[RMDB]
RNA sequence: GGGAACGACUCGAGUAGAGUCGAAAAAUGACCCGCUCCGGGUUCAGCGCCUCGGCGGCGCCCGGGUCGUGGGUCACCAGCACGACGGCGCCGGCGUAGGUGCGCAGCGCCUCGAGCACCUGCUCGAGUAUCGGUGCUCAUUCGUGAGCACCGAUACAAAAGAAACAACAACAACAAC
Reactivity to 2A3 in 0.01 (KOAc 150mM, MgCl2 10mM, bicine 150mM(pH8.5), 24C), signal-to-noise 1, nucleotides 027 to 126: a000u030g020a000c000c000c010g040c070u000c020c050g000g000g000u110u110c070a080g050c000g010c000c020u040c050g140g000c010g050g130c010g060c030c000c000g230g050g020u070c020g000u030g000g040g000u020c000a000c040c000a030g130c010a010c030g060a000c090g000g000c010g000c000c020g130g030c020g050u110a100g090g120u220g110c010g000c000a050g020c050g020c020c010u030c000g010a020g010c010a060c040c030u060g000c010u000c020g030a030
Reactivity to DMS in 0.01 (KOAc 150mM, MgCl2 10mM, bicine 150mM(pH8.5), 24C), signal-to-noise 2, nucleotides 027 to 126: a130u000g010a090c000c050c030g020c050u000c030c100g040g000g010u000u000c120a100g020c010g000c010c000u020c100g020g010c000g010g020c040g020c010c040c300g000g020g020u000c060g020u000g000g000g010u000c110a050c080c080a080g010c020a020c020g000a050c070g000g000c000g000c010c010g010g010c030g020u000a010g020g000u000g020c000g000c100a140g020c120g000c020c030u000c160g000a020g000c010a160c250c110u000g000c000u000c010g000a190

Chemical mapping of a 177-nucleotide RNA with 2A3 and DMS. Conditions: 150 mM KOAc, 10 mM MgCl2 and 150 mM bicine (pH 8.5), 24 C. For DMS, 1,252 sequencing reads were counted.